[RMDB]
RNA sequence: GGGAACGACUCGAGUAGAGUCGAAAAUCAAGAGGACAACUAUUUACUAUCUGACUUCAGUUCAGCUCUUGACAUAGUCGACGAAGUCGAAUACAUGAAGGAACUUCAUGUAUAAUAGUUGACUAUAGAUAGUAUUGACAUUCGUGUCGGUACUAUCAAAAGAAACAACAACAACAAC
Reactivity to 2A3 in 0.01 (KOAc 150mM, MgCl2 10mM, bicine 150mM(pH8.5), 24C), signal-to-noise 9, nucleotides 027 to 126: u070c020a030a020g030a030g090g070a060c030a070a030c080u080a090u120u170u110a150c080u090a070u120c070u120g020a020c010u060u030c090a060g040u080u050c020a030g020c020u010c010u050u060g010a010c010a050u070a010g020u030c020g010a010c010g020a040a000g030u040c030g010a020a010u000a000c000a000u000g010a000a010g220g080a120a090c030u000u000c000a000u000g000u000a000u010a010a010u030a010g000u000u010g010a010c000u020a010u040a100
Reactivity to DMS in 0.01 (KOAc 150mM, MgCl2 10mM, bicine 150mM(pH8.5), 24C), signal-to-noise 9, nucleotides 027 to 126: u020c030a060a040g020a050g010g010a130c100a050a090c080u010a050u020u020u020a110c120u010a100u020c070u020g010a010c010u000u000c030a070g010u020u010c110a080g000c020u000c040u000u010g010a070c260a060u010a020g000u000c030g020a020c010g000a030a040g010u000c030g010a120a030u000a010c010a000u000g000a010a010g010g010a130a300c040u000u000c000a000u000g000u000a000u000a040a040u010a040g010u000u000g000a070c010u000a040u020a090